This 177-nucleotide RNA was probed chemically with 2A3. Conditions: 150 mM KOAc, 10 mM MgCl2 and 150 mM bicine (pH 8.5), 24 C. The 2A3 profile rests on 448 reads. For 2A3 the reverse transcriptase was SuperScript II with manganese.

RNA sequence: GGGAACGACUCGAGUAGAGUCGAAAAAGCGUGCGCUACGGCGCACGCAAAGUUGGAAAUUGAUUGACUGGGUUUCGAAAUAUACCAGUUAAUUGACUCCAACUAACUGGUCGUUACGACGACCAGAACACAGCAGACCUUUCGAGGUCUGCUGUGUAAAAGAAACAACAACAACAAC
Reactivity to 2A3 in 0.01 (KOAc 150mM, MgCl2 10mM, bicine 150mM(pH8.5), 24C), signal-to-noise 1, nucleotides 027 to 126: a000g010c000g000u080g060c000g000c000u010a060c290g210g000c000g000c020a000c000g090c000a000a000a000g000u000u000g080g000a040a230a300u000u000g000a000u020u000g000a000c000u010g000g000g080u060u300u270c260g000a000a140a070u230a080u060a140c000c000a020g030u000u000a000a000u000u000g000a000c000u000c000c000a030a000c040u050a110a000c000u000g000g010u000c000g000u030u060a060c300g000a000c020g000a000c130c000a020g010a000